[RMDB]
RNA sequence: GGGAACGACUCGAGUAGAGUCGAAAAAGCAGGGGUACGCUCCUGCAUGGGUAGACGAAUUGACCCCAACUGAAGUUCAAUUCUAACGUUAAAAGGAGUUUUAUAUGACUGGACGUACGCGUCCAGAUGACGAUUUCAUUCUUCGGAAUGAAAUCAACGAUGUAUAGAGCUUCGGCUCUAUACAUCGAAAAGAAACAACAACAACAAC
Reactivity to DMS in 0.01 (KOAc 150mM, MgCl2 10mM, bicine 150mM(pH8.5), 24C), signal-to-noise 1, nucleotides 027 to 156: a110g000c010a060g010g010g010g020u010a100c210g070c000u010c000c000u000g030c010a100u010g010g000g000u000a100g010a140c100g000a070a020u000u010g010a090c010c020c020c000a050a260c140u000g000a040a060g010u010u010c000a030a040u000u010c010u010a070a170c050g000u000u000a150a050a150a140g010g010a150g010u000u000u020u000a140u010a100u000g010a190c000u030g010g030a010c020g000u000a100c210g020c030g040u000c000c000a060g020a040u010g040a140c100g000a030u000u000u010c030a020u000u000c000u010u030c280g030g000a010a000u010g000a000a020a000u000c020a030a070
Reactivity to 2A3 in 0.01 (KOAc 150mM, MgCl2 10mM, bicine 150mM(pH8.5), 24C), signal-to-noise 3, nucleotides 027 to 156: a020g010c000a010g020g010g000g010u030a030c120g000c110u010c000c000u000g000c010a000u020g000g000g010u090a090g050a190c060g000a030a000u020u000g000a000c000c000c000c010a030a060c160u240g040a020a010g040u050u000c010a010a010u000u030c000u050a080a090c120g080u120u170a050a070a020a010g110g050a120g030u090u060u090u060a130u040a060u170g160a100c010u010g010g000a000c000g020u060a010c210g010c020g120u010c000c000a010g000a000u020g050a010c100g000a000u000u000u010c000a020u000u000c000u010u050c120g050g000a000a000u000g000a000a000a000u010c010a000a010
Chemical mapping of a 207-nucleotide RNA with DMS and 2A3. Source: RMDB library M2RFPK, as collected in RNAgym. Reactivities are rounded to 0.1 and cut off at 0 and 3. DMS (dimethyl sulfate) methylates the pairing face of unpaired adenines and cytosines. For DMS, 1,949 sequencing reads were counted. Reactivities are given for positions 27 through 156. Conditions: 150 mM KOAc, 10 mM MgCl2 and 150 mM bicine (pH 8.5), 24 C.